[RMDB]
RNA sequence: GGGAACGACUCGAGUAGAGUCGAAAACAAGAUGUCUAAGGGACACAUGUUGGCAGAUGUCGUUGCCAUCAUAGGUACGAGGCCUAUUGUGUAGUAGAGGUAUCCUAGACAAAGGAGUUCGGGACGAUCAUGGGAUCCAGUUCGCUGGAUCCCAUGAAAAAGAAACAACAACAACAAC
Reactivity to DMS in 0.01 (KOAc 150mM, MgCl2 10mM, bicine 150mM(pH8.5), 24C), signal-to-noise 2, nucleotides 027 to 126: c100a120a100g020a120u010g000u000c020u030a060a120g010g040g010a030c020a010c030a010u000g000u000u000g010g020c030a070g000a190u010g020u000c080g000u000u020g020c010c000a050u000c300a070u000a090g020g000u000a040c070g000a080g000g020c030c040u000a030u010u010g000u010g010u020a130g000u000a090g010a080g010g010u020a050u000c050c010u000a050g000a050c070a030a100a180g000g000a090g000u000u000c080g010g000g000a080c070g000a100
Reactivity to 2A3 in 0.01 (KOAc 150mM, MgCl2 10mM, bicine 150mM(pH8.5), 24C), signal-to-noise 2, nucleotides 027 to 126: c030a000a010g110a160u060g000u000c020u180a060a150g010g090g000a000c010a020c010a040u130g040u070u130g110g000c010a000g040a300u150g110u100c020g070u120u120g020c030c020a000u070c030a060u090a080g000g030u030a050c020g000a040g090g110c000c000u120a210u090u020g020u000g000u040a060g010u010a020g000a060g090g140u060a040u000c000c010u010a020g020a050c000a010a060a010g060g000a090g000u090u080c000g050g020g000a010c010g000a060

An RNA of 177 nucleotides, treated with DMS and 2A3 and read out base by base. Conditions: 150 mM KOAc, 10 mM MgCl2 and 150 mM bicine (pH 8.5), 24 C. The 2A3 profile rests on 1,299 reads.